[RMDB]
RNA sequence: GGGAACGACUCGAGUAGAGUCGAAAAUGAGAACCUCGAUAAGCGCAAGCUUACCGAAACUCAUGUGCAGGCUUUGAAAGCCCGGACCGCAAUAUUCGAGGUUGGCGCAGGCGUCGGUUACCCGAACGCGAAGGAAGUUAUUCGUAACUUCCUUCGCAAAAGAAACAACAACAACAAC
Reactivity to DMS in 0.01 (KOAc 150mM, MgCl2 10mM, bicine 150mM(pH8.5), 24C), signal-to-noise 4, nucleotides 027 to 126: u000g000a030g010a050a110c280c110u000c000g020a010u000a000a000g030c010g000c300a090a140g000c010u010u000a010c030c000g000a000a080a160c030u000c000a020u000g010u020g010c040a100g000g010c010u000u000u030g010a110a080a140g020c000c010c040g000g010a050c020c010g010c070a060a090u020a070u000u010c050g000a050g000g000u000u020g000g000c060g000c060a080g000g000c040g040u010c020g000g010u020u020a120c040c000c010g020a050a070c210
Reactivity to 2A3 in 0.01 (KOAc 150mM, MgCl2 10mM, bicine 150mM(pH8.5), 24C), signal-to-noise 7, nucleotides 027 to 126: u020g000a000g010a060a040c020c040u010c010g000a010u000a010a000g000c020g040c120a100a080g010c020u010u000a010c000c000g010a060a020a020c010u000c010a020u020g020u040g070c070a070g030g000c030u130u090u300g240a270a090a000g000c000c020c000g020g040a020c030c010g010c050a040a060u050a080u140u070c040g010a040g020g080u040u110g060g000c050g000c080a060g050g030c020g010u020c020g030g030u050u050a130c000c000c000g020a080a020c040